[RMDB]
RNA sequence: GGGAACGACUCGAGUAGAGUCGAAAACGAUCGCGGUCGCCGACGGCCGGGUCAUUGCCGUCGGUGACCGGUCCGAGGUUGCCGGCCUGGUUGGCGCCAACACCCGGGUCAUCGAUCUGGGUGCCGGCCUAGCUGUGAUUUUCGAAUCACAGCUAGGAAAAGAAACAACAACAACAAC
Reactivity to 2A3 in 0.01 (KOAc 150mM, MgCl2 10mM, bicine 150mM(pH8.5), 24C), signal-to-noise 1, nucleotides 027 to 126: c020g070a050u060c040g000c030g190g010u020c000g000c000c000g000a020c000g020g000c050c080g120g030g080u220c110a080u030u200g000c000c050g000u000c000g000g020u000g000a000c000c000g000g000u000c020c040g050a050g030g020u040u230g000c010c020g020g000c000c030u080g070g020u080u060g070g030c050g030c020c000a010a040c020a010c030c010c000g020g010g010u030c110a290u160c220g000a000u010c000u000g020g010g010u010g040c040c030g060g000
Reactivity to DMS in 0.01 (KOAc 150mM, MgCl2 10mM, bicine 150mM(pH8.5), 24C), signal-to-noise 2, nucleotides 027 to 126: c110g000a060u010c030g000c030g040g040u000c010g010c020c020g000a050c020g000g020c000c250g000g000g020u010c170a130u020u000g000c000c000g010u010c010g020g030u000g010a000c010c000g000g010u010c040c070g020a100g000g010u000u010g020c010c020g010g000c080c120u000g020g020u000u010g010g010c130g000c030c020a080a300c060a010c000c000c020g010g010g010u000c000a180u010c230g000a000u000c000u000g000g000g020u000g000c010c050g000g010
Source information: The record gives the reactivity of an RNA of 177 nucleotides to 2A3 and DMS. The data come from the RNA Mapping Database (RMDB), library OK2TRN. The 2A3 profile rests on 1,459 reads. Conditions: 150 mM KOAc, 10 mM MgCl2 and 150 mM bicine (pH 8.5), 24 C. DMS (dimethyl sulfate) methylates the pairing face of unpaired adenines and cytosines.